[RMDB]
RNA sequence: GGGAACGACUCGAGUAGAGUCGAAAACGUGACCUUGGAGUGUGUGGUGCUGAUGUGUGAACUGUCUCGGGAGGAUGCCCCUGUGCGCUGGUACAAGGAUGGGCUGGAAGUGGAGGAGAGCGAGGCCAUUAACGGCAAAUUUCGAUUUGCCGUUAAUAAAAGAAACAACAACAACAAC
Reactivity to 2A3 in 0.01 (KOAc 150mM, MgCl2 10mM, bicine 150mM(pH8.5), 24C), signal-to-noise 2, nucleotides 027 to 126: c040g050u050g090a060c010c000u070u130g030g050a090g000u040g020u020g010u030g030g040u040g010c040u060g030a080u110g110u020g050u050g090a020a050c040u070g040u090c020u020c040g000g020g000a040g050g010a040u070g030c030c000c000c000u020g040u040g000c060g060c120u090g000g020u060a030c010a040a030g090g000a070u110g040g010g000c040u010g010g030a100a010g030u010g030g020a030g020g010a070g000a010g050c030g010a010g050g000c070c000
Reactivity to DMS in 0.01 (KOAc 150mM, MgCl2 10mM, bicine 150mM(pH8.5), 24C), signal-to-noise 4, nucleotides 027 to 126: c110g010u000g010a080c030c040u000u010g010g010a100g020u000g020u010g020u010g000g020u000g020c070u000g000a080u010g000u000g010u000g010a060a100c090u000g000u000c030u000c070g000g010g030a110g000g010a100u000g000c060c020c030c050u000g030u000g010c060g010c100u010g000g010u000a040c080a030a070g010g010a080u000g020g010g020c040u000g010g010a070a080g020u010g010g000a090g010g000a090g000a080g010c050g010a100g000g010c060c130